The record gives the reactivity of an RNA of 177 nucleotides to 2A3 and DMS. The RNA was probed in 150 mM KOAc, 10 mM MgCl2 and 150 mM bicine (pH 8.5) at 24 C. For DMS the reverse transcriptase was MarathonRT. The 2A3 profile rests on 882 reads.
RNA sequence: GGGAACGACUCGAGUAGAGUCGAAAAGAAAGAAAGAAAGAAUUAUUACCAUUAUCCUGGCCCUGAUAAAAAGUACAAUGACAAUAUCAAAAGUCUCCCAUUGCUGGGAGACGUUUUGAUCAGUUAACUUGUUUUCAGUCUUCGGACUGAAAACAAGAAAAGAAACAACAACAACAAC
Reactivity to 2A3 in 0.01 (KOAc 150mM, MgCl2 10mM, bicine 150mM(pH8.5), 24C), signal-to-noise 2, nucleotides 027 to 126: g010a000a030a040g060a000a070a040g070a050a000a000g050a140a040u210u080a090u100u050a240c000c000a040u070u000a030u000c000c040u000g000g050c000c000c020u060g080a050u130a070a220a040a000a080g210u160a140c120a010a000u180g060a060c010a020a180u120a070u300c000a000a000a000a000g000u040c000u010c000c000c000a090u080u300g160c280u130g030g000g050a050g000a000c000g000u000u000u000u000g000a000u020c020a000g020u040u050a040a070
Reactivity to DMS in 0.01 (KOAc 150mM, MgCl2 10mM, bicine 150mM(pH8.5), 24C), signal-to-noise 1, nucleotides 027 to 126: g030a210a100a030g000a110a050a140g020a030a040a070g000a070a060u000u020a070u020u000a110c070c020a080u040u000a040u000c060c010u000g020g000c000c030c040u000g070a090u040a050a100a130a060a060g000u020a090c170a010a080u000g010a050c060a040a090u070a050u000c000a000a000a000a080g000u010c000u000c000c030c020a080u020u000g080c270u000g010g030g000a000g000a000c000g000u020u000u000u000g000a040u020c090a200g000u000u000a100a290